Overview: Structure probing data (2A3 and DMS) for a 177-nucleotide construct.
RNA sequence: GGGAACGACUCGAGUAGAGUCGAAAAACGUGCUGGAGAACAACUUCGCGGCGCGUGCCGUGCUCGACCUGACCGAACUACCCAAACCGCCAUUCGCCCAACGAGUUCCGGAUUGGCUGUGGGCCGCUCCGAUGGUGUGAUUCGUCACACCAUCGGAAAAAGAAACAACAACAACAAC
Reactivity to 2A3 in 0.01 (KOAc 150mM, MgCl2 10mM, bicine 150mM(pH8.5), 24C), signal-to-noise 1, nucleotides 027 to 126: a010c030g000u020g000c070u020g060g050a110g050a210a070c090a100a130c100u060u000c070g110c050g090g010c050g000c020g060u040g000c010c030g090u060g000c000u040c050g070a110c050c030u040g030a050c030c020g020a030a010c000u050a040c050c000c000a040a040a030c060c030g100c020c000a050u080u060c060g030c000c000c000a000a050c070g050a010g070u070u000c020c020g080g000a040u060u060g000g000c040u020g000u120g060g080g000c010c030g000c030
Reactivity to DMS in 0.01 (KOAc 150mM, MgCl2 10mM, bicine 150mM(pH8.5), 24C), signal-to-noise 2, nucleotides 027 to 126: a100c130g060u000g000c000u000g020g000a300g010a140a080c140a100a120c170u000u000c080g000c030g000g010c030g000c140g010u000g030c050c020g000u000g000c070u000c050g000a100c030c000u000g000a090c030c070g000a040a080c070u000a150c040c010c010a020a110a080c040c080g020c030c030a100u000u000c060g030c010c020c030a070a100c090g000a110g000u000u000c080c020g010g000a090u000u000g010g020c000u000g020u000g020g030g000c000c020g020c110
Overview: For 2A3 the reverse transcriptase was SuperScript II with manganese. The 2A3 profile rests on 1,002 reads.